[RMDB]
RNA sequence: GGGAACGACUCGAGUAGAGUCGAAAACGUGCGUACUGGGCCGCCGGCACAAUGUUCCACCCAGCCGUCUCAGAGGCCGCGGUUCGACAACGAUCAGCCAGCAGGUCAGCGGGGUCCUCCUAGCUAGACCUGCCUGACUGUUCGCAGUCAGGCAGGUAAAAGAAACAACAACAACAAC
Reactivity to DMS in 0.01 (KOAc 150mM, MgCl2 10mM, bicine 150mM(pH8.5), 24C), signal-to-noise 5, nucleotides 027 to 126: c090g010u000g010c050g020u000a070c060u000g000g010g010c060c030g020c090c050g010g000c050a060c090a080a120u000g000u000u010c040c020a100c050c030c030a110g000c050c040g010u000c060u020c070a110g000a160g020g010c010c020g020c030g000g000u000u000c050g010a060c070a100a090c060g010a070u000c030a050g000c060c020a050g010c030a040g000g010u000c020a040g000c020g000g000g000g010u010c120c100u000c010c010u000a090g030c040u010a130g010
Reactivity to 2A3 in 0.01 (KOAc 150mM, MgCl2 10mM, bicine 150mM(pH8.5), 24C), signal-to-noise 3, nucleotides 027 to 126: c030g050u040g050c020g050u060a070c050u080g000g020g010c010c030g070c040c040g060g060c050a030c000a100a140u160g010u090u020c010c000a040c020c030c000a010g050c030c010g080u030c040u020c080a090g020a090g130g000c010c010g040c020g020g000u030u060c050g000a030c030a190a060c010g030a130u020c000a000g010c000c010a030g000c010a010g000g040u030c010a010g040c040g000g000g010g030u160c020c000u040c000c010u060a080g010c010u020a060g040